[RMDB]
RNA sequence: GGGAACGACUCGAGUAGAGUCGAAAAAGCGUAGCGGUACGCCGCUACGCAAGGCGCAUUUGAACUGUAUUGUACGCCUUGCAUAAAGCAAAAGUACUAAAAAAACGUGGCGUUACGACGGCACGAAAAAACAUCCAUUGGUUCGCCAAUGGAUGAAGCAGUAACCUUCGUUCGCGAAGGUUACUGCAAAAGAAACAACAACAACAAC
Reactivity to 2A3 in 0.01 (KOAc 150mM, MgCl2 10mM, bicine 150mM(pH8.5), 24C), signal-to-noise 1, nucleotides 027 to 156: a000g000c000g000u000a000g030c000g030g020u060a020c220g010c000c000g020c000u000a020c000g000c000a000a000g020g000c000g000c050a170u040u180u300g130a210a200c090u050g060u270a050u250u150g000u030a000c000g000c000c060u000u010g030c050a100u110a220a170a000g020c010a010a010a010a010g010u010a030c060u170a010a120a020a000a000a050a010c050g000u000g090g070c000g000u040u050a010c300g000a000c000g050g060c000a000c000g150a040a040a000a000a000a000c030a000u030c000c000a000u000u000g000g000u010u000c110g020c160c000a000a000u000g000g010a000u000g000a010a010